Chemical mapping of a 177-nucleotide RNA with 2A3.
[RMDB]
RNA sequence: GGGAACGACUCGAGUAGAGUCGAAAAAUCGUCAUCAUUGGAAUCUUUAUAAUUACAGGAUGUGAUUGGCAAAGGACGUCUAAAGAACCGUCUAAAAAUGCCCAAAAUCAGCAAGUGAUUAAAAUUGCGUGAACUAGGGCUUCGGCCCUAGUUCACGAAAAGAAACAACAACAACAAC
Reactivity to 2A3 in 0.01 (KOAc 150mM, MgCl2 10mM, bicine 150mM(pH8.5), 24C), signal-to-noise 1, nucleotides 027 to 126: a000u100c000g000u000c020a000u000c000a220u000u070g000g220a090a070u000c050u090u150u120a290u270a300a000u000u000a000c000a200g000g000a100u000g000u000g000a170u100u100g000g000c000a060a060a060g230g000a000c000g000u110c000u240a000a220a000g100a050a000c200c000g010u100c020u020a300a000a000a000a050u020g000c000c000c000a040a040a040a040u000c000a000g300c000a270a270g300u000g120a000u100u000a000a000a000a170u000u270g000

Description
For 2A3 the reverse transcriptase was SuperScript II with manganese. Reactivities are given for positions 27 through 126. For 2A3, 240 sequencing reads were counted.